Structure probing data (DMS and 2A3) for a 177-nucleotide construct. It was measured as part of the RMDB library OK2TRN. In probing experiments dimethyl sulfate is read out at A N1 and C N3, which are open when not base-paired. The reactions ran in a buffer of 150 mM KOAc, 10 mM MgCl2 and 150 mM bicine (pH 8.5), at 24 C. High 2A3 reactivity points to a flexible backbone, as in loops and unpaired stretches.
[RMDB]
RNA sequence: GGGAACGACUCGAGUAGAGUCGAAAACAUGGUACGAUCGCCAUGUACUGGAUCUAUCAUGCAUGGAUCAGAGGAUCCUAGCGAUCACACCAUGCAUGACUAGCGAUCACCAUGGUACAUGCGAGUCCACCCACCACGGGUUCGCCCGUGGUGGGUGAAAAGAAACAACAACAACAAC
Reactivity to DMS in 0.01 (KOAc 150mM, MgCl2 10mM, bicine 150mM(pH8.5), 24C), signal-to-noise 1, nucleotides 027 to 126: c060a110u000g010g010u030a090c060g010a080u000c000g000c170c170a010u010g010u000a020c030u020g000g000a050u000c010u000a180u000c000a030u000g010c000a000u000g020g010a140u020c170a090g010a130g020g000a000u000c000c000u000a060g000c150g010a000u000c000a030c010a140c010c000a010u000g020c000a030u000g000a000c250u000a010g030c240g000a070u000c000a100c210c240a050u000g000g000u000a030c010a020u000g000c020g000a070g000u000c010
Reactivity to 2A3 in 0.01 (KOAc 150mM, MgCl2 10mM, bicine 150mM(pH8.5), 24C), signal-to-noise 2, nucleotides 027 to 126: c020a080u110g050g070u210a110c060g000a100u010c010g090c100c050a010u010g040u010a040c060u050g050g030a040u000c010u010a050u020c030a000u000g020c000a000u010g000g030a090u090c110a090g200a210g150g010a010u000c000c040u120a090g020c090g120a000u010c000a000c010a000c030c010a000u000g000c020a030u000g010a010c030u050a040g070c020g040a000u040c030a030c110c030a140u300g030g000u010a030c020a040u030g050c010g010a020g030u000c000